The record gives the reactivity of an RNA of 177 nucleotides to DMS and 2A3. DMS adducts were read by reverse transcription with MarathonRT. In probing experiments dimethyl sulfate is read out at A N1 and C N3, which are open when not base-paired. High 2A3 reactivity points to a flexible backbone, as in loops and unpaired stretches. Conditions: 150 mM KOAc, 10 mM MgCl2 and 150 mM bicine (pH 8.5), 24 C.
[RMDB]
RNA sequence: GGGAACGACUCGAGUAGAGUCGAAAAUAAAAGGACAACGAAAUGCGCCUCUGCAACCUCCAGCUGGUGUUGUCUGGGAACCUGUUCAAAACUACCGAGUUUGAUCAGGCCAAUGCAGAGAAAAAAAACUGUAACCACUAUUCGUAGUGGUUACAGUAAAAGAAACAACAACAACAAC
Reactivity to DMS in 0.01 (KOAc 150mM, MgCl2 10mM, bicine 150mM(pH8.5), 24C), signal-to-noise 2, nucleotides 027 to 126: u000a020a040a080a100g000g000a030c020a040a040c030g000a070a130a060u000g000c120g030c160c010u010c000u000g010c010a040a060c100c040u000c060c020a060g010c080u000g010g020u000g000u000u000g000u010c000u010g000g000g000a150a300c010c000u000g010u000u000c010a000a010a030a030c020u000a220c220c180g000a050g000u000u000u000g000a020u000c010a000g000g000c040c120a100a090u000g010c000a020g000a060g030a000a000a000a080a050a040a090
Reactivity to 2A3 in 0.01 (KOAc 150mM, MgCl2 10mM, bicine 150mM(pH8.5), 24C), signal-to-noise 1, nucleotides 027 to 126: u110a000a060a010a010g100g000a010c000a020a000c060g130a050a080a080u130g050c060g010c010c000u000c010u000g000c000a040a100c010c010u000c010c030a020g040c070u110g010g060u080g080u110u010g040u000c010u020g000g000g010a020a060c000c000u000g010u050u000c010a010a040a080a070c030u080a170c060c140g120a070g110u000u010u000g010a000u020c040a000g010g050c090c000a000a000u010g000c000a000g020a000g000a050a020a010a000a000a000a010